[RMDB]
RNA sequence: GGGAACGACUCGAGUAGAGUCGAAAAGGCGGCGCGGCUUUCUCUCUCCCAUUCCGUAUCGUCGGGGCUACACGAACCCGAACCCGGGCGCUGCCCCUCACAAGCACCGCAUAUCAACGACGUACAAACUCACCCUCCGAUUCGUCGGAGGGUGAGUAAAAGAAACAACAACAACAAC
Reactivity to 2A3 in 0.01 (KOAc 150mM, MgCl2 10mM, bicine 150mM(pH8.5), 24C), signal-to-noise 2, nucleotides 027 to 126: g050g060c030g000g010c000g000c030g060g070c140u030u080u040c050u050c000u020c000u000c000c000c000a070u180u060c050c020g070u080a050u170c050g010u000c050g070g040g010g010c010u080a030c070a000c050g080a210a090c050c030c000g050a060a080c050c000c000g020g030g020c050g000c000u050g050c000c000c000c000u020c010a030c000a000a060g000c000a010c030c040g120c000a050u040a030u170c030a110a050c040g080a010c010g120u090a050c090a060a140

Chemical mapping of a 177-nucleotide RNA with 2A3. As a SHAPE reagent, 2A3 marks flexible, mostly unpaired nucleotides at the ribose 2'-OH. The data come from the RNA Mapping Database (RMDB), library OK1LIB. Conditions: 150 mM KOAc, 10 mM MgCl2 and 150 mM bicine (pH 8.5), 24 C.